[RMDB]
This 177-nucleotide RNA was probed chemically with DMS and 2A3. The DMS profile rests on 11,150 reads. 2A3 adducts were read by reverse transcription with SuperScript II with manganese. For DMS the reverse transcriptase was MarathonRT. The 2A3 profile rests on 5,938 reads. Values cover nucleotides 27 to 126. It was measured as part of the RMDB library OK1LIB.
RNA sequence: GGGAACGACUCGAGUAGAGUCGAAAAUAAAUAAAUGCAGUAAAUUUGAUCACUGUUUCAUUGUGGCAGGAUGAAACAGCUGUCCAGUAUUUCUUGGCUUGCCAUGGUAGUGUUUAGCUAUGAUCAGCGAGUAAAAUUAGUUCGCUAAUUUUACUCGAAAAGAAACAACAACAACAAC
Reactivity to DMS in 0.01 (KOAc 150mM, MgCl2 10mM, bicine 150mM(pH8.5), 24C), signal-to-noise 4, nucleotides 027 to 126: u030a060a050a040u030a030a060a070u020g000c040a090g000u010a040a070a030u020u010u020g010a090u010c060a130c030u010g000u000u000u000c010a020u000u020g030u010g020g000c040a050g010g000a040u010g000a030a000a010c020a040g000c140u010g020u010c030c050a080g000u020a070u000u000u000c070u020u000g000g000c030u010u000g020c020c020a050u000g000g010u010a050g010u000g010u010u020u010a110g000c050u010a040u010g010a070u010c080a070g000
Reactivity to 2A3 in 0.01 (KOAc 150mM, MgCl2 10mM, bicine 150mM(pH8.5), 24C), signal-to-noise 7, nucleotides 027 to 126: u090a000a040a020u120a030a050a050u170g030c060a020g090u200a050a090a190u160u160u140g060a040u070c020a010c030u000g000u000u000u000c000a010u000u040g050u050g140g020c060a030g040g060a010u020g000a000a000a010c000a010g020c050u030g050u020c040c020a030g040u050a160u030u070u010c040u060u080g050g000c040u050u070g010c010c020a030u050g080g010u030a070g010u030g090u120u180u150a020g020c020u040a040u100g030a100u130c020a010g050